[RMDB]
RNA sequence: GGGAACGACUCGAGUAGAGUCGAAAAGAUAUGGAUCGUGAUGACCAAGGAUCGACGAAGUCGGAAACGACAGAGAUCGCUUGCAAGCGAUCCUAAGUCAAAAUCUCGUAGAUUCGUCUACGAGAAAGAGCCGUAAACUAUUCGUAGUUUACGGCUCAAAAGAAACAACAACAACAAC
Reactivity to 2A3 in 0.01 (KOAc 150mM, MgCl2 10mM, bicine 150mM(pH8.5), 24C), signal-to-noise 2, nucleotides 027 to 126: g050a040u100a040u120g000g000a010u000c030g000u030g050a190u220g050a070c030c040a010a030g040g020a020u020c010g090a090c030g090a300a000g000u010c000g010g000a060a060a090c020g010a010c020a000g020a010g000a000u010c030g030c300u020u000g000c040a160a150g000c020g000a000u000c020c000u030a130a030g020u020c000a010a000a020a300u010c010u000c000g010u000a000g010a020u060u040c120g050u000c120u000a010c000g010a000g020a020a030a000
Reactivity to DMS in 0.01 (KOAc 150mM, MgCl2 10mM, bicine 150mM(pH8.5), 24C), signal-to-noise 2, nucleotides 027 to 126: g020a010u010a300u000g010g010a000u000c010g050u000g020a160u020g000a170c300c010a060a010g040g010a010u000c000g000a160c160g000a080a090g000u000c000g010g010a130a090a190c000g010a040c000a050g000a150g010a010u000c000g000c000u000u000g000c030a080a300g000c010g000a000u010c010c010u000a040a080g040u020c040a060a060a060a050u010c000u010c000g000u000a000g000a010u000u000c200g040u000c010u000a000c010g000a010g000a010a050a040